[RMDB]
RNA sequence: GGGAACGACUCGAGUAGAGUCGAAAACCUGUUAUCUGACCAAUAACAGAAUGCACCACAGCGUAAAAUCAUCUGAUUGGGUGAGUUGGUCGCACCGCCAUUUGACGAACGAACGACAAGCCUAAGCACUACGAGUAUGUGUUCGCACAUACUCGAACAAAGUGCUCUGAUUCGUCAGAGCACUUUGAAAAGAAACAACAACAACAAC
Reactivity to DMS in 0.01 (KOAc 150mM, MgCl2 10mM, bicine 150mM(pH8.5), 24C), signal-to-noise 2, nucleotides 027 to 156: c110c000u010g040u010u000a000u000c020u000g010a150c090c110a190a030u000a000a000c030a050g010a200a090u020g010c010a100c000c020a040c050a060g000c030g010u020a020a090a080a130u000c040a110u000c000u010g030a100u000u000g020g040g020u000g010a300g000u000u000g030g010u000c010g000c000a070c040c000g040c030c010a250u000u000u000g010a060c000g020a120a080c060g000a050a060c030g010a040c020a070a300g000c000c030u020a040a030g000c020a070c010u000a140c000g010a030g000u000a000u000g030u000g020u010u010c300g010c000a020c000a000u000a000c000u000c000g030a040a090
Reactivity to 2A3 in 0.01 (KOAc 150mM, MgCl2 10mM, bicine 150mM(pH8.5), 24C), signal-to-noise 5, nucleotides 027 to 156: c010c000u000g020u000u010a010u020c010u000g010a010c010c000a020a030u010a010a000c000a010g080a090a090u140g030c050a040c060c030a030c040a050g050c030g080u090a020a070a070a090u060c030a030u030c060u100g090a170u080u190g090g000g000u020g020a040g010u020u030g020g000u000c010g030c020a030c010c010g040c020c010a100u100u090u190g050a030c030g010a110a020c010g020a030a020c030g080a030c050a080a030g000c000c030u080a070a040g030c060a080c110u150a050c060g000a000g010u000a000u000g010u000g030u040u040c150g020c080a000c000a000u000a000c000u000c000g000a000a000

Source: RMDB library M2RFPK, as collected in RNAgym. Structure probing data (DMS and 2A3) for a 207-nucleotide construct. Values are in units of 0.01, from 0 to 300, in steps of 10. The reactions ran in a buffer of 150 mM KOAc, 10 mM MgCl2 and 150 mM bicine (pH 8.5), at 24 C. The 2A3 profile rests on 4,123 reads.